Chemical mapping of a 207-nucleotide RNA with 2A3. It was measured as part of the RMDB library OK3TST. Reactivities are rounded to 0.1 and cut off at 0 and 3. Values cover nucleotides 27 to 156. For 2A3 the reverse transcriptase was SuperScript II with manganese.
RNA sequence: GGGAACGACUCGAGUAGAGUCGAAAAAGUCAUGGUGUCCUGAGCCAUGGAGAGGAAACAGCGGUUUGCAGACAGAUGGGGAGAGGGAACAGCAUGUACGAGGCCGUGAAGCAUCUGAGGGCUUCAUGUAUCUGGGGAUCUAUGAAUAGUUCUGCAAUCACCCCAGGAUAUUCGUAUCCUGGGGUGAAAAAGAAACAACAACAACAAC
Reactivity to 2A3 in 0.01 (KOAc 150mM, MgCl2 10mM, bicine 150mM(pH8.5), 24C), signal-to-noise 1, nucleotides 027 to 156: a010g030u030c000a050u000g000g010u030g050u230c020c120u120g030a000g010c000c000a010u030g030g000a010g020a030g040g060a100a100a000c030a030g040c020g060g070u010u100u030g020c030a010g040a140c000a000g070a070u110g000g000g000g090a080g000a030g000g000g060a020a000c000a020g100c020a070u050g000u060a020c090g070a070g000g000c000c000g010u020g000a010a000g020c040a010u060c140u080g050a120g090g120g000c010u020u000c000a000u110g030u030a090u060c160u040g000g000g000g020a010u070c010u060a140u100g100a120a010u070a050g020u070u050c030u040g000c040a000a020